The record gives the reactivity of an RNA of 177 nucleotides to DMS and 2A3. Values cover nucleotides 27 to 126.
RNA sequence: GGGAACGACUCGAGUAGAGUCGAAAACGUGAAGAAUAAACGAAUUCUGUAUUUUGAUUGUGUCUGUGCCGUGGACGUAGUGAAAGGAACGUCGCGCGGGAUGCUUUUCAUGGUUUACACGUCGCAGAGCCCGGAUAUUAUUCGUAAUAUCCGGGCUAAAAGAAACAACAACAACAAC
Reactivity to DMS in 0.01 (KOAc 150mM, MgCl2 10mM, bicine 150mM(pH8.5), 24C), signal-to-noise 2, nucleotides 027 to 126: c110g000u030g030a090a030g000a050a120u010a050a140a160c190g030a090a030u000u020c010u010g000u060a100u020u000u000u020g000a120u000u000g000u000g020u000c010u000g000u020g010c000c000g030u000g000g010a010c100g020u060a160g000u020g000a010a000a040g000g000a000a100c120g020u000c050g010c150g030c080g000g000g000a000u000g000c000u000u000u000u000c010a030u030g000g030u010u000u010a110c030a050c000g010u000c020g010c050a040g000
Reactivity to 2A3 in 0.01 (KOAc 150mM, MgCl2 10mM, bicine 150mM(pH8.5), 24C), signal-to-noise 4, nucleotides 027 to 126: c040g040u090g050a070a050g000a050a190u150a110a150a020c090g020a110a090u060u050c040u090g110u120a240u070u230u130u080g250a250u020u060g010u010g010u000c000u000g010u040g000c010c010g000u010g030g020a020c010g050u110a070g020u040g100a000a010a010g080g030a130a250c040g020u020c010g000c010g010c120g060g050g000a010u020g030c000u000u060u030u000c000a030u020g020g010u020u040u090a050c000a000c000g010u010c000g010c000a010g000